Record summary:
An RNA of 207 nucleotides, treated with 2A3 and DMS and read out base by base. In probing experiments dimethyl sulfate is read out at A N1 and C N3, which are open when not base-paired. For DMS, 1,310 sequencing reads were counted. DMS adducts were read by reverse transcription with MarathonRT. 2A3 adducts were read by reverse transcription with SuperScript II with manganese. The RNA was probed in 150 mM KOAc, 10 mM MgCl2 and 150 mM bicine (pH 8.5) at 24 C.

RNA sequence: GGGAACGACUCGAGUAGAGUCGAAAACAACUGGAGUUUCUGUGGAGCAGAUGCUUGCAGCCAUAAAGGAGUUGGCCGAUGGGUGGAAUUAUGCCCCUGUUUUGGGUUCAUUCCAUCUUGAUGAUGAAUAUUCUCCUGAAAUGAUUAUGCAACAAACCAAUAUGCGGCAGUUCGCUGCCGCAUAUUGAAAAGAAACAACAACAACAAC
Reactivity to 2A3 in 0.01 (KOAc 150mM, MgCl2 10mM, bicine 150mM(pH8.5), 24C), signal-to-noise 2, nucleotides 027 to 156: c020a020a000c020u050g050g020a040g000u000u040u040c020u010g030u070g010g050a050g030c060a060g030a130u140g040c050u020u070g050c010a000g000c040c010a060u120a030a090a040g010g010a020g050u020u050g060g020c000c020g040a010u060g020g000g020u040g020g040a030a020u040u070a040u300g060c000c000c000c010u050g170u270u150u170u190g020g000g000u030u020c000a000u010u000c000c000a010u000c000u030u030g000a030u060g000a000u060g010a030a010u090a130u180u030c010u000c000c000u010g000a090a230a010u080g040a110u080u200a060u260g040c010a010a030c020a080a070a070c110
Reactivity to DMS in 0.01 (KOAc 150mM, MgCl2 10mM, bicine 150mM(pH8.5), 24C), signal-to-noise 1, nucleotides 027 to 156: c040a170a140c060u050g010g000a260g000u000u000u020c010u040g050u000g000g050a210g030c000a140g000a180u020g010c060u000u000g000c020a060g000c010c030a010u000a030a230a060g000g000a050g000u020u000g000g020c280c020g000a120u000g000g000g070u010g000g000a080a040u010u010a170u000g010c120c020c010c070u020g020u020u000u040u000g010g000g030u000u000c210a100u030u000c020c010a000u000c000u000u000g000a300u000g000a070u010g030a170a130u040a120u000u000c000u000c000c000u000g010a050a070a110u010g000a070u010u000a150u000g010c050a050a070c110a070a070a140c110